[RMDB]
RNA sequence: GGGAACGACUCGAGUAGAGUCGAAAACACAACUGCGAAGGGGGGACGGAGAAGGCUUUGUUGGCCGGGCGACGGUUGUCCCGGUUUAAGCGUGUAGGCUGGUUUUCCAGGCAAAUCCGGAAUUGAAACUUAAUUCCGAGUUCGCUCGGAAUUAAGUAAAAGAAACAACAACAACAAC
Reactivity to DMS in 0.01 (KOAc 150mM, MgCl2 10mM, bicine 150mM(pH8.5), 24C), signal-to-noise 2, nucleotides 027 to 126: c080a080c130a060a080c050u000g010c080g000a100a100g010g000g000g020g000g000a070c060g020g000a040g010a100a080g000g000c020u000u000u010g000u000u000g010g010c000c000g040g000g000c300g000a050c160g020g010u000u000g000u000c010c000c010g020g000u000u010u010a040a050g010c040g000u000g020u000a050g020g000c040u000g030g010u000u000u000u000c010c020a130g000g010c050a060a050a070u000c020c010g000g000a080a100u010u010g000a100a090